Source information:
Structure probing data (DMS and 2A3) for a 177-nucleotide construct.

RNA sequence: GGGAACGACUCGAGUAGAGUCGAAAACGGGUAGACGCUCUCCUUGCGCAUGUUUCCACUGGAGUCGUAAACAUUCCGCGUCGGCGCAUUCUGUCUUACCCACGUCAGUGCAGAUUCGAGCAGGUCACCCACCAUACCUAUUCGUAGGUAUGGUGGGAAAAGAAACAACAACAACAAC
Reactivity to DMS in 0.01 (KOAc 150mM, MgCl2 10mM, bicine 150mM(pH8.5), 24C), signal-to-noise 4, nucleotides 027 to 126: c130g000g030g000u000a040g010a140c060g010c090u010c090u000c050c080u000u000g020c030g030c090a040u000g010u010u000u010c020c020a070c140u000g050g000a020g000u000c030g010u000a040a120a090c140a150u000u000c060c030g010c100g020u000c070g000g010c080g010c040a060u000u000c080u000g010u000c040u000u000a090c030c010c020a110c180g010u000c040a020g020u020g000c020a060g010a130u000u000c090g000a060g030c050a060g020g030u000c070a160
Reactivity to 2A3 in 0.01 (KOAc 150mM, MgCl2 10mM, bicine 150mM(pH8.5), 24C), signal-to-noise 3, nucleotides 027 to 126: c020g030g000g010u040a020g030a050c010g020c020u030c020u000c050c020u030u070g010c010g000c020a060u080g050u060u090u050c050c030a040c080u130g060g000a070g020u060c010g070u100a050a130a050c030a060u110u050c040c010g060c040g060u090c000g070g000c010g000c010a010u090u000c030u070g010u020c000u060u070a080c020c040c010a010c050g080u070c020a070g020u020g140c020a000g000a060u060u080c030g010a020g010c030a010g020g060u060c010a070

The 2A3 profile rests on 3,492 reads. Conditions: 150 mM KOAc, 10 mM MgCl2 and 150 mM bicine (pH 8.5), 24 C. Reactivities are given for positions 27 through 126.